[RMDB]
RNA sequence: GGGAACGACUCGAGUAGAGUCGAAAACAAAGAGGGCCAGAUGAUACCAACAAAUGAAGUGGGUGUUUUAAACGAGAGGAAACCUGGGCUUGAGGAGCCUGACUCUUUCAUAAUGGGCAGAUGGGGGCAGUAAGGUUUGCACUUCACUUGGGAUGAAGUAAUAAGAGACUUUCGAGUCUCUUAUUACAAAAGAAACAACAACAACAAC
Reactivity to DMS in 0.01 (KOAc 150mM, MgCl2 10mM, bicine 150mM(pH8.5), 24C), signal-to-noise 2, nucleotides 027 to 156: c080a080a090a080g020a110g010g010g000c030c030a090g010a110u000g010a090u010a130c020c020a050a170c030a060a100a130u020g000a050a090g040u010g010g020g060u000g020u000u000u000u000a040a060a120c080g020a140g000a060g020g010a040a030a080c050c000u000g020g020g020c030u000u010g010a080g000g020a170g000c010c010u000g020a070c020u000c020u000u030u010c050a110u000a090a120u010g000g000g000c030a080g000a120u010g010g010g000g100g010c050a040g030u020a030a090g040g010u010u010u000g000c020a060c020u010u000c040a070c060u000u000g030g020g000a080u010g010a070a170
Reactivity to 2A3 in 0.01 (KOAc 150mM, MgCl2 10mM, bicine 150mM(pH8.5), 24C), signal-to-noise 3, nucleotides 027 to 156: c050a010a080a020g040a060g020g010g000c030c040a050g020a030u070g010a040u070a090c040c030a040a090c060a080a160a090u190g030a080a020g010u040g010g070g020u020g040u020u130u030u130a080a070a030c060g000a010g000a010g060g050a040a040a030c050c000u060g010g030g000c020u020u030g030a050g030g010a030g020c010c000u020g030a090c010u030c000u060u090u020c040a020u040a180a080u070g010g010g030c010a010g020a080u060g030g000g000g000g000c010a010g020u050a030a020g030g000u030u060u070g010c020a020c010u050u040c020a030c050u040u070g080g000g000a030u130g080a080a030

This 207-nucleotide RNA was probed chemically with DMS and 2A3. The data come from the RNA Mapping Database (RMDB), library OK3TST.